[RMDB]
RNA sequence: GGGAACGACUCGAGUAGAGUCGAAAAUCCAGUCCCUCCCCCGUCCGAGAGAAGGGAGACUCCGGAACUCCUGCCAUUUGAGGGACGAAGCCGCCACCGGGCGCUCCCCUCGGACCUCCUCUGGAGGAAGGCUACUGCUUCGGCAGUAGCAAAAGAAACAACAACAACAAC
Reactivity to 2A3 in 0.01 (KOAc 150mM, MgCl2 10mM, bicine 150mM(pH8.5), 24C), signal-to-noise 8, nucleotides 027 to 129: u010c000c000a000g030u020c000c000c000u020c000c000c010c000c000g040u020c000c000g040a030g010a010g030a100a190g010g010g000a020g030a060c010u000c010c000g020g030a040a030c030u040c020c010u050g100c040c040a140u080u070u200g060a060g000g000g000a010c040g040a070a010g070c070c030g020c030c010a090c040c020g050g010g000c090g020c010u010c000c000c000c000u000c000g010g020a030c000c000u020c000c020u130c060u120g020g000a010g010g030a020a050g060
Reactivity to DMS in 0.01 (KOAc 150mM, MgCl2 10mM, bicine 150mM(pH8.5), 24C), signal-to-noise 6, nucleotides 027 to 129: u050c030c020a070g030u030c020c000c020u030c010c040c010c000c060g000u030c020c030g030a090g030a140g030a160a210g030g060g000a010g020a080c020u010c000c050g010g000a130a150c090u000c040c040u040g040c110c070a110u080u030u070g040a100g030g000g000a010c050g030a090a050g030c080c030g040c050c000a150c020c010g000g010g020c150g010c050u000c030c010c000c020u000c030g020g010a090c030c070u030c000c000u040c110u060g030g000a070g000g030a070a080g060
The record gives the reactivity of an RNA of 170 nucleotides to 2A3 and DMS. The RNA was probed in 150 mM KOAc, 10 mM MgCl2 and 150 mM bicine (pH 8.5) at 24 C.